[RMDB]
Structure probing data (DMS and 2A3) for a 207-nucleotide construct. The reactions ran in a buffer of 150 mM KOAc, 10 mM MgCl2 and 150 mM bicine (pH 8.5), at 24 C.
RNA sequence: GGGAACGACUCGAGUAGAGUCGAAAAGCCUCGUUGCGCUGCACGGGUCCUAAGCUGAUGCUGACCACGCGCUCGGACGCGGUACCCGUCCCUGCGCUGAACUACGAUGGAUCGCCGGUGGAAAUUGAUGACUGUAGCUCGCUUUUACGGUCAGUAACUUUUACCUCUUGUUCGCAAGAGGUAAAAGAAAAGAAACAACAACAACAAC
Reactivity to DMS in 0.01 (KOAc 150mM, MgCl2 10mM, bicine 150mM(pH8.5), 24C), signal-to-noise 2, nucleotides 027 to 156: g020c020c020u000c090g050u000u000g010c010g050c050u000g030c060a090c000g000g020g020u010c030c050u000a060a190g030c050u010g020a150u000g030c030u000g000a090c050c000a210c120g000c020g030c040u000c090g010g010a020c010g040c010g020g030u010a050c060c060c020g000u000c010c000c020u010g000c020g000c030u000g010a070a120c040u000a040c030g000a140u010g040g020a070u000c000g030c040c030g000g000u000g030g010a030a060a110u010u000g010a120u000g010a030c040u000g020u000a050g040c070u000c080g010c140u000u010u000u010a050c040g030g010u000c020a050g030u000a070a250
Reactivity to 2A3 in 0.01 (KOAc 150mM, MgCl2 10mM, bicine 150mM(pH8.5), 24C), signal-to-noise 4, nucleotides 027 to 156: g030c010c010u030c090g080u080u070g060c060g020c060u090g020c050a020c050g030g000g000u020c000c020u080a050a050g030c030u120g020a100u230g050c030u040g010a080c020c000a090c080g010c000g000c010u010c000g030g030a010c000g000c050g070g040u160a130c030c020c020g030u000c020c000c000u020g010c000g030c030u060g030a070a010c020u070a050c150g060a100u150g040g030a060u060c040g040c090c000g030g000u060g020g060a040a060a100u120u140g040a060u050g020a000c010u010g000u020a010g030c020u050c100g070c060u010u140u050u070a020c040g000g000u020c020a020g040u080a010a040